[RMDB]
This 177-nucleotide RNA was probed chemically with DMS and 2A3.

RNA sequence: GGGAACGACUCGAGUAGAGUCGAAAAUCCAUCAGGCAGACGAGACCCACCAGAUACAUGGGUGCACUGACCAUAAGGUCUUUUGUUGCAGUCUAUAUGGGACGAAGUGCAAUGUGGAACAUACAGCCCCAAAUACGAAUUUCGAUUCGUAUUUGGGAAAAGAAACAACAACAACAAC
Reactivity to DMS in 0.01 (KOAc 150mM, MgCl2 10mM, bicine 150mM(pH8.5), 24C), signal-to-noise 7, nucleotides 027 to 126: u000c000c000a090u010c130a110g010g010c030a060g010a100c080g020a190g010a090c030c020c040a100c120c070a080g010a120u010a060c150a080u000g000g000g010u000g000c020a030c040u000g000a060c010c010a110u020a080a270g010g010u010c010u000u000u000u020g020u000u010g020c120a060g000u010c010u000a140u010a070u010g010g010g010a070c080g020a080a070g010u000g010c030a040a040u000g010u010g000g010a050a060c090a070u010a060c190a080g000c180
Reactivity to 2A3 in 0.01 (KOAc 150mM, MgCl2 10mM, bicine 150mM(pH8.5), 24C), signal-to-noise 5, nucleotides 027 to 126: u000c010c000a050u050c040a050g110g000c020a010g060a170c030g060a040g060a060c010c000c010a030c020c020a040g030a140u120a090c100a090u100g040g000g040u020g000c020a010c030u040g020a030c000c010a060u070a220a080g000g040u040c000u050u150u060u140g180u080u120g020c040a020g060u000c030u030a160u020a030u210g050g000g040a050c040g050a130a010g040u020g020c010a030a040u110g030u060g050g030a050a020c010a040u130a040c040a070g060c010

DMS adducts were read by reverse transcription with MarathonRT. The 2A3 profile rests on 6,849 reads. 2A3 adducts were read by reverse transcription with SuperScript II with manganese. Source: RMDB library OK2TRN, as collected in RNAgym. Conditions: 150 mM KOAc, 10 mM MgCl2 and 150 mM bicine (pH 8.5), 24 C.